[RMDB]
RNA sequence: GGGAACGACUCGAGUAGAGUCGAAAAUACGCUCACCACAAAGUGAAACGCACAUGUUGGUGAUAGCAGACUGCACGGACGGUUGCUUGCCUGUCUGGAGCAGCGAGCAAGGCGGCGGUGGCGGGGGCAGCGCCAUGCUCUUCGGAGCAUGGCGCUGAAAAGAAACAACAACAACAAC
Reactivity to 2A3 in 0.01 (KOAc 150mM, MgCl2 10mM, bicine 150mM(pH8.5), 24C), signal-to-noise 2, nucleotides 027 to 126: u300a040c110g000c000u000c030a000c000c000a000c090a020a120a000g000u010g060a190a220a050c180g120c040a000c000a000u140g060u170u110g030g010u020g030a020u080a060g000c000a030g040a030c000u000g000c050a000c010g010g010a000c000g050g000u120u150g170c190u070u190g000c010c000u200g010u050c010u030g020g000a090g070c000a010g000c060g020a000g000c040a070a000g070g000c010g010g000c000g060g030u050g040g010c090g020g010g030g020g010
Reactivity to DMS in 0.01 (KOAc 150mM, MgCl2 10mM, bicine 150mM(pH8.5), 24C), signal-to-noise 1, nucleotides 027 to 126: u010a160c220g000c030u050c000a030c000c000a050c010a040a140a040g010u000g000a160a090a150c300g010c070a000c010a140u030g000u000u040g000g000u010g000a070u010a080g050c010a020g000a290c000u000g000c000a040c000g000g000a000c010g030g010u030u030g030c170u000u050g000c060c030u070g000u000c030u020g000g000a120g010c010a010g020c030g010a300g080c100a030a140g030g000c070g000g010c080g000g030u000g000g000c120g000g000g000g020g000

Background:
Chemical mapping of a 177-nucleotide RNA with 2A3 and DMS. 2A3 adducts were read by reverse transcription with SuperScript II with manganese. High 2A3 reactivity points to a flexible backbone, as in loops and unpaired stretches. Conditions: 150 mM KOAc, 10 mM MgCl2 and 150 mM bicine (pH 8.5), 24 C.